[RMDB]
RNA sequence: GGGAACGACUCGAGUAGAGUCGAAAAGAUAUGGACCUGUGGACGCGUUGAAAUAAGUCGGAAACGACUUAUGGAGCGUACCACUGGGUCCUAAGUCAAAAGUGCCAAUCGUUCGCGAUUGGCACAACCCUAUAAUAUGGUUCGCCAUAUUAUAGGGAAAAGAAACAACAACAACAAC
Reactivity to 2A3 in 0.01 (KOAc 150mM, MgCl2 10mM, bicine 150mM(pH8.5), 24C), signal-to-noise 6, nucleotides 027 to 126: g010a000u040a030u100g000g000a000c010c020u030g010u030g020g020a010c010g020c010g250u300u040g000a010a010a010u000a010a000g000u000c000g000g000a040a040a020c010g010a000c000u000u000a010u010g000g010a010g000c020g020u040a280c000c010a000c010u010g020g010g000u000c000c000u010a050a000g030u020c030a000a000a090a210g010u000g000c010c000a010a000u000c000g060u110u060c300g020c010g240a000u000u000g000g000c000a000c000a000a000
Reactivity to DMS in 0.01 (KOAc 150mM, MgCl2 10mM, bicine 150mM(pH8.5), 24C), signal-to-noise 6, nucleotides 027 to 126: g010a030u010a250u010g010g000a010c000c010u010g030u000g000g010a060c010g030c000g010u010u020g000a200a140a010u000a000a000g010u000c000g010g000a060a050a100c000g000a020c000u000u000a000u000g000g010a040g020c000g040u000a100c000c000a010c020u020g020g010g010u000c000c000u010a000a090g010u000c020a090a090a140a130g020u000g000c000c010a000a000u000c000g020u000u020c300g010c010g010a010u000u000g000g000c000a000c010a020a060